RNA sequence: GGGAACGACUCGAGUAGAGUCGAAAAUUGAAGGUAAAACAGCCUGUGGGCGAAACACACCCACAGGGCCCAUUGGGCGCUAGCACUCUGGUAUCACGGUACCUUUGUGCGCCUGUUUUACCGAAGGGACGGAACGUGUUCGCACGUUCCAAAAGAAACAACAACAACAAC
Reactivity to 2A3 in 0.01 (KOAc 150mM, MgCl2 10mM, bicine 150mM(pH8.5), 24C), signal-to-noise 6, nucleotides 027 to 129: u140u140g050a070a010g000g020u000a000a000a000a000c000a000g010c000c010u000g000u000g010g000g020c000g030a010a090a000c110a010c000a000c020c000c000a000c000a000g000g000g000c000c000c020a030u270u300g000g000g000c010g000c060u090a030g020c000a000c010u030c000u000g000g000u000a000u020c010a040c230g130g000u000a000c000c000u010u000u000g000u010g000c010g000c000c010u000g000u000u000u000u010a000c000c000g000a000a010g020g030g020a020c060
Reactivity to DMS in 0.01 (KOAc 150mM, MgCl2 10mM, bicine 150mM(pH8.5), 24C), signal-to-noise 4, nucleotides 027 to 129: u040u020g030a120a090g010g010u010a020a020a010a020c010a030g000c000c000u030g010u020g000g000g000c060g000a040a130a100c180a120c130a220c000c000c000a000c000a030g020g000g000c000c000c000a000u060u010g040g010g000c000g000c040u040a060g020c010a010c030u000c020u000g000g030u020a010u030c030a070c240g080g010u020a000c000c020u010u000u000g000u020g020c040g000c010c000u040g020u040u040u000u000a010c040c000g000a060a040g010g030g030a140c130